[RMDB]
RNA sequence: GGGAACGACUCGAGUAGAGUCGAAAAUUGCGACCAAAGAAAUCUCGCAGAGGUGCAACAACCGCUUGUUCCAGCGUUUUGGGCACAGGAAUGGUGUCGGUUGGUUCUGGUGCAAGCAACGUCGCGAAUAACCCAAUAUAUUCGUAUAUUGGGUUAUAAAAGAAACAACAACAACAAC
Reactivity to 2A3 in 0.01 (KOAc 150mM, MgCl2 10mM, bicine 150mM(pH8.5), 24C), signal-to-noise 9, nucleotides 027 to 126: u070u060g000c010g010a000c030c030a060a110a020g070a040a160a030u050c050u030c060g120c110a050g020a040g090g050u060g040c040a110a070c010a040a040c080c030g000c020u010u010g010u020u010c000c000a000g000c010g020u020u040u180u170g050g020g000c020a010c030a040g120g250a160a140u220g110g000u030g040u060c050g040g100u060u080g020g020u050u020c010u010g000g010u010g010c010a000a000g010c010a010a030c040g010u020c000g000c010g020a020
Reactivity to DMS in 0.01 (KOAc 150mM, MgCl2 10mM, bicine 150mM(pH8.5), 24C), signal-to-noise 9, nucleotides 027 to 126: u010u010g010c010g010a040c020c160a090a120a150g010a090a110a070u000c040u000c030g020c160a110g010a120g010g010u000g010c090a090a100c100a080a070c120c080g020c010u000u000g010u000u000c000c000a040g010c100g010u000u000u000u010g020g000g010c010a010c020a080g010g010a130a090u010g000g010u000g010u000c010g010g010u000u000g010g000u000u000c010u000g000g010u000g010c010a020a030g010c050a090a070c160g010u000c010g010c020g010a120